[RMDB]
RNA sequence: GGGAACGACUCGAGUAGAGUCGAAAAGAGGUACUUCGGUACCUCCAAUAGGGGUCGGAAGAAGAGCGAGGAUCUUGAACUACAGCUGAAGCCUCCACGGCUGCAAGGGAGCUUGUAAACGACGGAGGCACCCGAAAUACGACAGUUCGCUGUCGAAUAACUUUAGAGUAUUCGUACUCUAAAGUUAAAAAGAAACAACAACAACAAC
Reactivity to DMS in 0.01 (KOAc 150mM, MgCl2 10mM, bicine 150mM(pH8.5), 24C), signal-to-noise 3, nucleotides 027 to 156: g010a010g030g010u000a010c010u000u000c230g050g010u010a000c000c000u010c010c010a060a110u000a140g010g020g040g010u000c030g010g010a110a160g010a090a200g010a110g050c040g010a120g030g030a080u010c030u000u010g020a090a180c060u010a100c000a020g020c000u010g000a040a080g020c000c010u010c000c030a260c040g010g000c010u010g000c010a040a100g000g000g010a140g000c050u000u000g040u000a060a060a220c070g030a100c070g020g030a050g030g070c010a030c010c020c020g000a060a060a170u010a090c000g000a070c010a050g020u000u000c140g000c020u000g030u000c020g030a090a120
Reactivity to 2A3 in 0.01 (KOAc 150mM, MgCl2 10mM, bicine 150mM(pH8.5), 24C), signal-to-noise 7, nucleotides 027 to 156: g000a000g000g000u030a010c010u060u120c270g060g000u010a000c030c000u000c010c000a090a050u140a090g100g020g070g030u020c030g030g050a070a080g060a070a030g010a060g010c020g000a180g010g000a010u000c000u020u030g040a150a120c110u120a080c190a010g000c010u020g020a080a010g010c000c000u000c010c000a020c010g010g000c010u020g000c010a010a000g000g000g010a020g010c010u040u040g060u090a100a140a070c030g070a020c030g020g000a000g000g000c000a010c000c010c000g060a060a050a050u230a070c020g000a000c010a010g010u060u080c190g050c140u000g010u010c000g000a010a060